[RMDB]
RNA sequence: GGGAACGACUCGAGUAGAGUCGAAAAUGAAUCCACGUGCAACUAAAAGGAGUGCUAACAGUGACUUUUGGUACGCUGUGUAUAUGCAGAAAAAGAUAUUAGACACCAAUUAAGCCGGGACGAAAGCCUCCAUGGUGGGGUUCGCCCCACCAUGGAGAAAAGAAACAACAACAACAAC
Reactivity to DMS in 0.01 (KOAc 150mM, MgCl2 10mM, bicine 150mM(pH8.5), 24C), signal-to-noise 1, nucleotides 027 to 126: u030g050a300a040u010c010c000a060c080g010u050g010c030a050a080c080u000a000a000a000a140g000g000a040g000u000g000c030u000a000a000c220a070g030u010g000a060c000u000u050u010u020g000g030u000a030c180g090c110u040g000u000g000u030a110u050a070u000g040c050a050g010a000a010a010a200a020g000a100u010a130u030u000a070g000a000c100a080c020c050a020a190u010u010a180a060g020c030c000g050g000g010a020c140g030a050a200a040g000c110
Reactivity to 2A3 in 0.01 (KOAc 150mM, MgCl2 10mM, bicine 150mM(pH8.5), 24C), signal-to-noise 1, nucleotides 027 to 126: u190g020a000a070u000c000c000a140c030g140u080g030c040a070a000c020u030a100a020a020a010g210g050a000g000u050g090c090u000a000a000c000a000g000u000g100a030c000u120u300u170u280g000g030u000a040c040g000c020u060g020u000g160u000a000u020a070u300g000c050a020g140a030a050a070a000a030g090a000u070a090u100u090a040g020a000c030a000c020c020a010a000u050u050a010a010g050c040c000g020g000g000a000c060g030a060a020a000g020c000
Chemical mapping of a 177-nucleotide RNA with DMS and 2A3. The DMS profile rests on 839 reads. The reactions ran in a buffer of 150 mM KOAc, 10 mM MgCl2 and 150 mM bicine (pH 8.5), at 24 C.